[RMDB]
RNA sequence: GGGAACGACUCGAGUAGAGUCGAAAAUGCACUUAGGAAUGACUACGGGCUCAGAGGAGUGGGAGGUCGGUCAGCCUUUGCCCUAGAGCAAACUUGUCCAACCCUUGGCCCACAGGCCGCCUGCAGCCCCGGACGGCUUUUGAAUGUGGCCCAACAACAUAAUCGUCAGGUUCGCCUGACGAUUAUGAAAAGAAACAACAACAACAAC
Reactivity to 2A3 in 0.01 (KOAc 150mM, MgCl2 10mM, bicine 150mM(pH8.5), 24C), signal-to-noise 3, nucleotides 027 to 156: u120g020c010a020c070u100u070a050g060g090a100a070u130g020a040c020u050a030c070g010g000g040c010u000c010a010g020a020g020g010a050g000u010g000g010g000a040g000g010u010c040g000g040u010c000a010g040c010c050u000u010u010g010c000c020c060u150a090g040a010g020c000a030a010a010c020u070u200g030u020c000c000a040a010c030c000c020u040u040g120g030c030c080c000a010c010a010g250g040c000c010g110c040c000u030g010c120a040g020c050c000c030c020g000g020a030c050g040g030c000u050u060u020u090g080a140a080u100g020u020g040g030c020c000c000a010a050c030a030a020
Reactivity to DMS in 0.01 (KOAc 150mM, MgCl2 10mM, bicine 150mM(pH8.5), 24C), signal-to-noise 1, nucleotides 027 to 156: u020g000c010a070c010u000u000a160g000g000a180a060u000g000a110c020u000a100c020g010g000g010c050u010c120a100g010a140g030g000a120g020u020g000g000g020a120g010g000u000c020g070g020u000c040a070g000c060c050u000u000u000g000c040c050c060u000a170g040a080g030c000a000a010a040c040u000u010g010u000c010c000a030a040c000c000c060u000u010g030g000c000c000c000a060c060a070g040g030c030c010g020c040c000u000g020c190a060g010c040c000c020c040g030g030a070c060g020g020c030u010u000u000u050g020a140a120u010g030u000g010g010c000c020c050a070a090c070a180a220